Chemical mapping of a 177-nucleotide RNA with 2A3 and DMS.
It was measured as part of the RMDB library OK2TRN.
Conditions: 150 mM KOAc, 10 mM MgCl2 and 150 mM bicine (pH 8.5), 24 C.
For DMS the reverse transcriptase was MarathonRT.

RNA sequence: GGGAACGACUCGAGUAGAGUCGAAAAGAAAGGGACCCCUGCCAGGGGAGCGUCGGUCAGCACCCAAAGCAUAUUUUUUUAUGCCGCUGACACCCCUCGACGCAGCAGGAGGGGUGGUCCCGAAAGAAUAAUAAUAUGGUUUCGACCAUAUUAUUAUAAAAGAAACAACAACAACAAC
Reactivity to 2A3 in 0.01 (KOAc 150mM, MgCl2 10mM, bicine 150mM(pH8.5), 24C), signal-to-noise 2, nucleotides 027 to 126: g040a060a120a040g000g000g000a020c020c010c020c010u060g130c030c010a100g010g030g030g080a030g010c000g030u050c050g020g020u010c010a000g000c010a090c000c190c070a080a010a030g000c000a000u030a050u030u230u020u040u030u010u000a010u020g010c030c030g000c010u010g000a000c010a070c020c060c000c020u050c020g020a040c030g000c030a010g060c050a000g000g070a020g010g030g000g050u050g000g040u020c000c000c000g000a020a050a010g060a050
Reactivity to DMS in 0.01 (KOAc 150mM, MgCl2 10mM, bicine 150mM(pH8.5), 24C), signal-to-noise 4, nucleotides 027 to 126: g000a120a100a210g010g000g000a050c010c010c010c020u000g010c020c050a110g030g030g010g010a100g010c010g000u000c030g020g010u000c010a010g020c010a160c150c120c110a080a100a160g010c000a000u000a000u000u000u000u020u030u010u000a000u010g000c010c100g010c010u000g000a010c010a130c040c050c030c030u010c010g000a040c030g010c030a090g000c110a110g010g000a060g000g000g000g030u010g010g000u000c010c000c000g010a060a070a110g010a150